[RMDB]
Conditions: 150 mM KOAc, 10 mM MgCl2 and 150 mM bicine (pH 8.5), 24 C. This 207-nucleotide RNA was probed chemically with 2A3. 2A3 adducts were read by reverse transcription with SuperScript II with manganese. 2A3 is a SHAPE reagent: it acylates the 2'-hydroxyl of flexible nucleotides of all four kinds.
RNA sequence: GGGAACGACUCGAGUAGAGUCGAAAAACGGUCAUAUACGUAUGACCGAAUGAGCAUAACAGGGCCACGCCAAAGCGUUCACAUUGUGGCCCCUGUCAGAUUCUGGUAAAUCUGCGAGUUCUGCUAAAUUAGGUAACUCUCUUCGGAGAGUUACCAAGAUGCAACCGUAGUUCGCUACGGUUGCAUCAAAAGAAACAACAACAACAAC
Reactivity to 2A3 in 0.01 (KOAc 150mM, MgCl2 10mM, bicine 150mM(pH8.5), 24C), signal-to-noise 2, nucleotides 027 to 156: a000c010g000g000u000c010a000u000a000u010a080c180g130u080a010u010g000a000c000c010g000a020a040u040g010a000g050c040a020u030a080a000c010a020g000g020g000c000c010a010c000g100c060c010a090a180a040g150c160g080u290u250c170a170c020a180u180u170g000u000g000g000c000c000c000c000u030g020u030c010a000g000a010u130u000c010u180g050g030u100a030a060a000u000c020u030g020c020g010a100g050u100u060c100u060g000c030u090a050a150a100u300u140a110g000g000u000a000a000c000u000c000u000c000u070u030c060g020g000a000g000a000g000u000u000a000c010c000a000a000